RNA sequence: GGGAACGACUCGAGUAGAGUCGAAAAGAUAUGGAGUUUCGACCCGUACGAUAAGAUGACCAUCGGAAACGAUGGCAUCUUUUGACGUACGCGAAACUCCUAAGUCAAAGCGUCCUUCGGGACGCAAGAAUCAUGGGGAGUUCGCUCCCCAUGAUUCAAAAGAAACAACAACAACAAC
Reactivity to DMS in 0.01 (KOAc 150mM, MgCl2 10mM, bicine 150mM(pH8.5), 24C), signal-to-noise 2, nucleotides 027 to 126: g010a030u020a300u000g020g000a000g000u020u000u000c010g000a300c300c300c070g000u000a000c000g020a160u020a030a000g000a000u000g000a160c000c000a000u000c000g000g000a060a090a160c000g000a020u010g010g000c000a000u000c000u000u020u000u000g020a120c090g010u000a000c010g010c000g000a010a000a010c000u010c000c000u010a000a040g020u000c030a090a160a160g000c000g000u000c000c000u000u010c240g030g010g000a020c000g010c000a000a010
Reactivity to 2A3 in 0.01 (KOAc 150mM, MgCl2 10mM, bicine 150mM(pH8.5), 24C), signal-to-noise 2, nucleotides 027 to 126: g000a010u040a020u130g010g000a020g020u010u020u020c130g040a180c160c150c100g000u030a010c070g060a160u060a270a010g010a010u040g230a300c000c000a000u030c000g010g000a050a040a030c000g000a010u000g000g000c020a000u000c010u040u000u030u070g050a010c040g000u020a010c010g000c010g030a000a000a000c000u000c020c000u000a040a000g040u030c050a030a090a140g000c010g010u020c010c000u060u070c250g150g000g020a010c000g000c000a000a020
Overview: The data come from the RNA Mapping Database (RMDB), library TTRDES. Structure probing data (DMS and 2A3) for a 177-nucleotide construct. Reactivities are rounded to 0.1 and cut off at 0 and 3. Reactivities are given for positions 27 through 126. The DMS profile rests on 2,121 reads. The reactions ran in a buffer of 150 mM KOAc, 10 mM MgCl2 and 150 mM bicine (pH 8.5), at 24 C. 2A3 adducts were read by reverse transcription with SuperScript II with manganese.